[RMDB]
RNA sequence: GGGAACGACUCGAGUAGAGUCGAAAAGAUAUGGAUCGGUAGCAAGGCGGAGAGAUCUUACCUUAUGGUCGGAAACGACCAUAAGGUAAGAUCUCUUGCGCUGAUGACCUAUUUCGAUCCUAAGUCAGUUUCAAAUGUUGUUCGCAACAUUUGAAACAAAAGAAACAACAACAACAAC
Reactivity to DMS in 0.01 (KOAc 150mM, MgCl2 10mM, bicine 150mM(pH8.5), 24C), signal-to-noise 1, nucleotides 027 to 126: g000a070u020a300u000g000g000a000u000c000g000g020u000a020g000c030a090a170g020g030c000g010g010a000g000a000g030a020u020c000u000u000a010c000c000u000u000a000u000g000g000u010c010g010g010a140a070a240c000g000a010c020c000a000u000a010a000g000g040u000a020a000g010a000u000c000u000c000u000u010g030c010g060c010u000g000a110u000g010a100c300c010u040a040u000u010u000c020g010a050u000c010c020u010a030a150g000u000c070a180